[RMDB]
RNA sequence: GGGAACGACUCGAGUAGAGUCGAAAAACACAAGCAGGGAAAAGAUAAUCCAUUUAGAUCUUUAAUGCUUUGGAAAUGCGUGUAACAGUACUGCAAUAAUCACAGCUCUGGGAAAAACAACGAAACUUUCCCUUGUGGAGAGGAGGGAUUUUCCUGCUCUGGGCUAUGAAUUCGUUCAUAGCCCAGAAAAAGAAACAACAACAACAAC
Reactivity to 2A3 in 0.01 (KOAc 150mM, MgCl2 10mM, bicine 150mM(pH8.5), 24C), signal-to-noise 2, nucleotides 027 to 156: a000c050a030c030a030a020g000c040a030g050g020g030a070a020a080a000g040a020u090a050a110u080c020c010a030u060u120u200a110g010a070u040c010u030u160u120a150a020u200g000c000u070u040u030g070g000a080a180a030u060g010c080g010u050g030u080a100a070c030a140g090u050a050c000u040g030c000a030a040u130a230a020u080c030a020c020a060g000c020u000c030u050g040g020g080a060a060a040a030a000c090a040a070c060g050a150a050a020c030u000u010u030c000c000c000u060u160g060u120g020g000a030g000a010g020g060a020g000g000g050a020u010u000u010u020c000c000u030g000c000
Reactivity to DMS in 0.01 (KOAc 150mM, MgCl2 10mM, bicine 150mM(pH8.5), 24C), signal-to-noise 1, nucleotides 027 to 156: a040c030a100c080a050a100g000c050a000g010g070g000a120a000a030a100g000a130u010a100a110u000c080c080a200u000u010u000a080g000a060u010c020u000u020u000a110a120u010g020c030u000u000u020g010g010a080a050a070u000g020c010g070u010g030u000a110a060c020a080g000u010a080c000u010g030c030a060a160u020a080a160u000c100a020c010a020g000c050u030c020u030g010g060g000a040a120a080a080a120c070a090a150c090g000a030a060a050c030u010u000u000c000c000c060u000u000g020u000g000g020a030g010a000g000g000a100g010g000g000a180u020u000u000u000c000c000u010g010c220